Chemical mapping of a 177-nucleotide RNA with 2A3 and DMS.
Values cover nucleotides 27 to 126.
DMS adducts were read by reverse transcription with MarathonRT.
2A3 adducts were read by reverse transcription with SuperScript II with manganese.

RNA sequence: GGGAACGACUCGAGUAGAGUCGAAAAACGUGCGAAAGCACGUUGGACGUCGUAGGAUAUGUAGGAUAUUCCUACAUGAGGAUCACCCAUGUUGACAUGGAAGAAGGACAGCAGGACGAUGUCCAUAACGCCAUCCAUUAUUCGUAAUGGAUGGCGUAAAAGAAACAACAACAACAAC
Reactivity to 2A3 in 0.01 (KOAc 150mM, MgCl2 10mM, bicine 150mM(pH8.5), 24C), signal-to-noise 3, nucleotides 027 to 126: a000c000g000u020g010c000g080a100a030a020g010c000a000c000g000u010u020g000g010a010c020g000u000c000g020u020a040g020g070a060u030a010u220g010u020a000g000g050a060u040a170u300u160c000c000u000a000c000a000u000g010a040g120g030a130u030c000a040c010c020c000a000u050g050u110u280g170a110c050a070u030g010g020a080a050g030a100a070g220g040a020c020a010g050c040a030g080g050a010c010g010a010u010g000u000c000c000a010u110a030
Reactivity to DMS in 0.01 (KOAc 150mM, MgCl2 10mM, bicine 150mM(pH8.5), 24C), signal-to-noise 4, nucleotides 027 to 126: a050c010g040u000g010c000g000a150a100a250g010c010a010c000g000u000u000g000g030a040c000g010u000c000g030u000a050g010g010a140u010a010u000g000u000a010g000g000a220u010a150u000u010c000c000u000a000c000a030u000g010a140g010g000a100u000c040a130c120c010c010a030u000g020u010u000g020a120c070a030u000g000g010a100a080g020a140a170g000g020a060c070a080g000c120a160g000g000a030c010g000a040u000g000u000c000c000a080u010a080